[RMDB]
RNA sequence: GGGAACGACUCGAGUAGAGUCGAAAAAUCACUUGCUUUAACGGUGUGGGAAAAACUUAGGACCUAAAGCAGCAAGCUUAAGUAUGCAUUACCCAUUGUACACCUCGACAAAGAGAAUACAUCAAGAUCUAAAUAUUUCAUUCGUGAAAUAUUUAGAAAAAGAAACAACAACAACAAC
Reactivity to DMS in 0.01 (KOAc 150mM, MgCl2 10mM, bicine 150mM(pH8.5), 24C), signal-to-noise 6, nucleotides 027 to 126: a080u010c060a100c040u000u000g030c050u000u010u010a090a140c120g020g020u000g010u010g020g010g010a140a080a060a130a040c060u010u000a050g010g000a080c070c040u010a050a040a100g010c090a050g020c060a090a080g000c030u000u000a030a050g000u000a050u000g010c110a070u010u000a130c020c000c020a160u010u010g020u010a060c070a060c100c010u000c070g010a090c130a040a060a080g000a050g000a130a090u010a050c100a040u010c110a060a120g010a140
Reactivity to 2A3 in 0.01 (KOAc 150mM, MgCl2 10mM, bicine 150mM(pH8.5), 24C), signal-to-noise 4, nucleotides 027 to 126: a000u080c040a010c030u020u080g010c010u070u100u130a110a040c040g000g000u040g020u100g060g020g030a080a090a050a020a000c030u060u030a060g040g060a050c010c020u070a080a080a020g060c040a010g000c030a050a020g010c000u070u060a070a020g030u080a070u110g020c040a080u010u110a090c000c010c000a020u010u070g010u030a020c040a050c040c000u020c040g070a060c100a090a120a010g050a020g040a090a030u090a070c030a040u060c050a060a020g010a080
This 177-nucleotide RNA was probed chemically with DMS and 2A3.
Conditions: 150 mM KOAc, 10 mM MgCl2 and 150 mM bicine (pH 8.5), 24 C.
For DMS the reverse transcriptase was MarathonRT.
The 2A3 profile rests on 5,575 reads.
The DMS profile rests on 5,336 reads.